[RMDB]
RNA sequence: GGGAACGACUCGAGUAGAGUCGAAAAGAUAUGGAGUAGUGGAUAGUAUCCCAGUAGGGAGCGAUUAUAUCGGAAACGAUAUAUUCGCGAGGAUCUACCCGGGAUACUAUCCACUACUCCUAAGUCAUCGUAAUAGAACGUUCGCGUUCUAUUACGAAAAAGAAACAACAACAACAAC
Reactivity to DMS in 0.01 (KOAc 150mM, MgCl2 10mM, bicine 150mM(pH8.5), 24C), signal-to-noise 2, nucleotides 027 to 126: g010a060u020a300u010g000g000a020g000u000a020g030u010g000g000a020u000a010g000u000a000u000c000c000c000a260g010u010a020g000g000g000a040g020c000g020a010u000u000a000u000a000u010c000g020g000a140a110a260c020g020a010u000a000u000a010u000u000c000g030c000g000a080g020g010a030u000c010u000a010c020c040c160g020g000g010a000u010a000c010u000a000u000c000c010a000c010u000a000c000u010c000c000u000a000a050g020u010c030a120
Structure probing data (DMS) for a 177-nucleotide construct. The RNA was probed in 150 mM KOAc, 10 mM MgCl2 and 150 mM bicine (pH 8.5) at 24 C. DMS adducts were read by reverse transcription with MarathonRT. Source: RMDB library TTRINS, as collected in RNAgym.